[RMDB]
RNA sequence: GGGAACGACUCGAGUAGAGUCGAAAACAUCGUCGCGUUCGCGCGACGAUGAAAAAGAUAUGGAUCCACACAAAGCGAUGAAAGUACUCGGAAACGAGUACUGGAGCUUGUGUAAGGAUCCUAAGUCAAAAAACGUUACAUGUUCGCAUGUAACGAAGGGAGUGUCAAAGUUCGCUUUGACACUCCCAAAAGAAACAACAACAACAAC
Reactivity to 2A3 in 0.01 (KOAc 150mM, MgCl2 10mM, bicine 150mM(pH8.5), 24C), signal-to-noise 1, nucleotides 027 to 156: c010a010u000c000g010u010c000g010c030g030u050u120c210g010c000g000c010g060a000c000g000a000u010g000a000a000a000a010a000g010a020u030a040u050g000g000a000u000c000c000a000c000a000c030a040a240a040g000c010g300a300u000g000a010a010a010g010u000a000c000u000c000g000g000a000a010a000c000g000a000g000u000a010c000u010g000g000a000g010c080u130u020g010u000g010u020a210a300g000g000a000u010c040c000u000a000a000g010u000c100a000a000a060a060a220a160c000g000u000u000a000c000a000u000g030u080u090c300g000c200a000u000g000u000a000a000c000g020a080a040